[RMDB]
RNA sequence: GGGAACGACUCGAGUAGAGUCGAAAACCUUCGUGAGACAGGAGUAAUUCCCGCCGAAACAGGGUUUAUCACCCUUCCUUUCUUCGGGUGUCCUUCCUCUCGCCUGGAGAGGUCUUCGGCCCUCGCCCGGAGCUUCUCUCUGGAGACUACCCGGUGGGUUAAGUAGGUACUUCGGUACCUACUUAACAAAAGAAACAACAACAACAAC
Reactivity to DMS in 0.01 (KOAc 150mM, MgCl2 10mM, bicine 150mM(pH8.5), 24C), signal-to-noise 1, nucleotides 027 to 156: c030c000u000u010c120g030u010g000a220g020a070c110a030g010g000a060g040u000a100a120u000u000c000c000c030g000c030c060g010a100a090a080c050a030g000g000g010u000u000u000a150u010c190a250c030c020c000u000u000c070c010u010u000u000c010u030u000c010g020g020g010u000g020u000c030c000u000u000c040c010u000c020u000c030g040c050c020u020g030g000a050g020a020g010g020u010c030u000u010c020g000g000c040c060c170u000c120g000c170c000c000g010g010a070g000c050u000u000c000u000c030u040c090u010g010g000a140g020a110c050u000a160c010c010c020g000g030u000g000g000
Reactivity to 2A3 in 0.01 (KOAc 150mM, MgCl2 10mM, bicine 150mM(pH8.5), 24C), signal-to-noise 3, nucleotides 027 to 156: c000c000u080u120c080g040u040g030a030g000a020c160a100g010g020a010g010u140a070a020u080u040c010c000c000g000c030c040g050a050a030a040c300a170g040g020g020u100u110u090a130u220c120a000c000c000c000u020u030c000c000u000u030u020c000u050u040c000g010g020g000u010g010u020c000c000u050u040c010c010u010c010u010c010g010c010c020u050g010g000a030g000a000g000g000u020c000u000u010c010g020g010c020c110c130u080c140g030c040c000c000g020g000a000g000c060u190u040c000u000c000u000c010u040g050g000a090g040a070c070u120a110c050c000c060g040g100u120g020g110